[RMDB]
Chemical mapping of a 177-nucleotide RNA with DMS and 2A3. The reactions ran in a buffer of 150 mM KOAc, 10 mM MgCl2 and 150 mM bicine (pH 8.5), at 24 C. For DMS the reverse transcriptase was MarathonRT. It was measured as part of the RMDB library OK1LIB.
RNA sequence: GGGAACGACUCGAGUAGAGUCGAAAAGGUAAUUUGGUAUUGUUAGCGACGAUUGGUUUAAUAUCUGUGUUGCGUGAAGGUGUUGAGGUUAUCAUUUUCUAUAUGGGGAUGAUAGGUGAGCUAGCGACCCUACCAACUUAUUCGUAAGUUGGUAGGGAAAAGAAACAACAACAACAAC
Reactivity to DMS in 0.01 (KOAc 150mM, MgCl2 10mM, bicine 150mM(pH8.5), 24C), signal-to-noise 4, nucleotides 027 to 126: g010g030u010a030a040u010u010u010g000g010u020a080u010u010g010u000u000a060g010c040g010a070c070g010a100u020u010g010g010u020u010u010a030a050u020a030u010c040u010g000u020g000u010u010g010c050g020u010g020a060a090g000g010u000g010u000u000g000a090g000g000u030u010a010u010c010a030u000u010u010u000c020u020a090u020a080u040g000g000g000g000a010u010g000a020u000a020g000g010u000g010a090g000c040u010a040g010c080g010a140
Reactivity to 2A3 in 0.01 (KOAc 150mM, MgCl2 10mM, bicine 150mM(pH8.5), 24C), signal-to-noise 6, nucleotides 027 to 126: g080g010u150a120a100u120u120u110g080g010u060a050u120u060g070u070u110a030g030c020g040a050c020g030a080u040u120g080g080u080u060u070a070a100u150a030u070c030u000g110u020g030u080u110g050c050g000u050g070a040a020g030g010u060g040u080u090g030a040g030g030u010u000a020u010c000a010u020u050u070u000c050u080a150u030a120u300g030g020g000g020a010u040g010a030u020a020g030g090u070g030a030g020c010u030a020g000c010g070a030